The data come from the RNA Mapping Database (RMDB), library OK3TST. Chemical mapping of a 207-nucleotide RNA with 2A3 and DMS. For DMS the reverse transcriptase was MarathonRT. The DMS profile rests on 3,696 reads. As a SHAPE reagent, 2A3 marks flexible, mostly unpaired nucleotides at the ribose 2'-OH. Conditions: 150 mM KOAc, 10 mM MgCl2 and 150 mM bicine (pH 8.5), 24 C.

[RMDB]
RNA sequence: GGGAACGACUCGAGUAGAGUCGAAAACAAGCGCCGUCACAAGCCGCAGCGUGGAUUAAGGACUGCAUCGAGUGGGUGCCGUCCAACCAAGUCAAAUACGAAAAGGUGCAAGCGCAAGCGUGGUUUGAAACCCACCUGCAAGACGAAGGCUUACAGCCACUAGAAUUUUGUUCGCAAAAUUCUAGUGAAAAGAAACAACAACAACAAC
Reactivity to 2A3 in 0.01 (KOAc 150mM, MgCl2 10mM, bicine 150mM(pH8.5), 24C), signal-to-noise 6, nucleotides 027 to 156: c040a040a050g040c020g040c050c020g070u070c050a060c050a190a070g050c090c050g000c050a010g000c030g040u030g010g030a080u120u130a170a140g000g000a000c000u010g000c020a010u020c050g120a110g200u280g110g070g000u010g000c010c020g000u000c000c010a010a020c030c010a040a000g050u080c020a040a060a080u160a070c070g100a080a030a060a090g100g000u080g040c050a120a070g050c040g000c080a040a030g040c050g040u030g000g040u050u000u080g050a080a050a010c000c010c000a000c000c000u010g010c010a050a050g010a000c030g050a100a030g050g010c010u000u050a040c060a030g050c030
Reactivity to DMS in 0.01 (KOAc 150mM, MgCl2 10mM, bicine 150mM(pH8.5), 24C), signal-to-noise 2, nucleotides 027 to 156: c030a120a270g030c050g070c020c020g010u000c090a160c070a090a140g020c050c030g040c050a000g010c060g000u000g020g000a140u000u000a160a250g000g020a040c020u000g000c010a030u000c010g040a190g030u010g040g000g000u010g010c000c050g020u000c020c030a040a080c050c020a070a110g020u030c020a090a070a230u000a170c030g020a110a060a060a090g020g010u000g000c020a100a070g020c090g050c030a020a090g020c000g010u010g010g020u000u000u000g000a130a120a060c060c000c000a000c030c000u000g000c040a060a120g000a110c040g010a040a130g030g010c020u000u010a040c040a160g010c110